RNA sequence: GGGAACGACUCGAGUAGAGUCGAAAAGUACCUGCACACAUGCGGAUGAUUACAUCUGAUGUAAUCCCAUGUGUUAUAAGAACGACCUAUGGGAAGUGUGGAGGGUGAUUGAGCACGAGAAUCAUGGAGUUGCUUGCUUAUUCGUAAGCAAGCAACUAAAAGAAACAACAACAACAAC
Reactivity to DMS in 0.01 (KOAc 150mM, MgCl2 10mM, bicine 150mM(pH8.5), 24C), signal-to-noise 3, nucleotides 027 to 126: g000u000a070c000c000u000g000c110a040c000a020c000a070u010g000c090g000g000a170u010g000a130u010u020a040c030a130u010c120u060g040a180u020g010u010a080a110u010c000c010c010a010u000g000u010g000u000u030a100u030a160a150g020a110a070c140g020a090c070c020u010a030u000g010g010g000a030a110g020u020g020u000g010g000a030g000g000g020u000g010a040u000u010g040a070g000c110a060c100g000a050g020a080a050u000c040a070u010g000g010
Reactivity to 2A3 in 0.01 (KOAc 150mM, MgCl2 10mM, bicine 150mM(pH8.5), 24C), signal-to-noise 3, nucleotides 027 to 126: g020u100a040c010c010u030g000c040a000c010a000c000a010u040g030c110g070g000a050u030g020a010u010u100a060c030a010u020c110u290g060a040u030g100u070a000a090u080c020c000c010a020u030g050u010g020u010u030a090u000a030a010g100a100a050c030g020a050c000c010u040a050u030g010g000g020a040a020g020u060g010u040g010g100a030g030g000g030u090g010a080u020u080g010a020g050c080a000c120g040a020g070a100a020u060c020a050u110g060g020